[RMDB]
RNA sequence: GGGAACGACUCGAGUAGAGUCGAAAACAUAGGGAGUUCGCUCCCUAUGAAAAUGCCGGCUGCAAGAAAAGUGCUUCAAAGAGUGGGAGCACUGCCCAAAAAAAAGGGCGAUGUUCGCAUCGCCCAACCGAUAUUAAAUGUUCGCAUUUAAUAUCGGAAAAGAAACAACAACAACAAC
Reactivity to 2A3 in 0.01 (KOAc 150mM, MgCl2 10mM, bicine 150mM(pH8.5), 24C), signal-to-noise 5, nucleotides 027 to 126: c000a000u010a010g010g010g010a010g020u050u070c100g070c070u000c000c000c000u000a000u000g000a000a000a000a000u060g020c020c010g080g040c070u080g010c050a060a040g040a080a150a020a010g020u000g000c000u010u010c020a090a130a090g140a110g090u170g040g000g000a000g000c000a000c000u010g010c000c000c010a070a060a030a010a000a000a020a050g000g000g000c010g000a000u010g010u030u060c190g010c100a000u000c000g000c000c000c000a010a010
Reactivity to DMS in 0.01 (KOAc 150mM, MgCl2 10mM, bicine 150mM(pH8.5), 24C), signal-to-noise 3, nucleotides 027 to 126: c010a000u000a010g000g010g020a020g030u000u010c210g020c000u000c000c000c000u000a000u010g000a030a070a050a060u000g000c070c040g000g040c050u010g000c050a080a080g000a080a100a090a040g010u000g000c010u000u000c020a070a110a150g000a160g030u010g010g000g010a010g000c000a000c010u000g010c020c030c020a010a010a000a060a020a030a080a140g030g010g020c010g010a000u000g000u000u010c220g020c000a010u000c000g030c000c000c000a010a020